Structure probing data (2A3) for a 207-nucleotide construct. It was measured as part of the RMDB library OK3TST.
RNA sequence: GGGAACGACUCGAGUAGAGUCGAAAAGUGUCAGCUCCGUGUUGGCUCCGUGAUGUGUGGCACAGAGCAGGGCCGCCCUGGGGUGGUGCAUGGAGGGCAGCAGCUCAGGGCAUGGCCGUGGUCACAUUUACAUCCACUCAACUACAUGCACGUUAAACCUACCUCGCUGAUUCGUCAGCGAGGUAGGAAAAGAAACAACAACAACAAC
Reactivity to 2A3 in 0.01 (KOAc 150mM, MgCl2 10mM, bicine 150mM(pH8.5), 24C), signal-to-noise 3, nucleotides 027 to 156: g100u060g040u040c020a010g030c030u040c070c080g040u080g010u180u060g060g000c040u000c060c050g090u080g030a070u040g060u000g000u050g000g000c070a030c020a080g060a020g000c040a070g000g050g020c010c000g000c000c000c000u000g020g020g080g080u010g010g110u010g010c030a060u150g100g140a070g060g110g000c000a070g070c010a020g070c010u010c000a010g010g060g000c010a030u110g020g000c020c020g020u020g030g010u010c010a030c020a060u120u090u090a050c020a060u030c030c010a040c050u110c010a050a060c030u110a050c030a050u070g010c040a010c120g010u080u130a070a050a050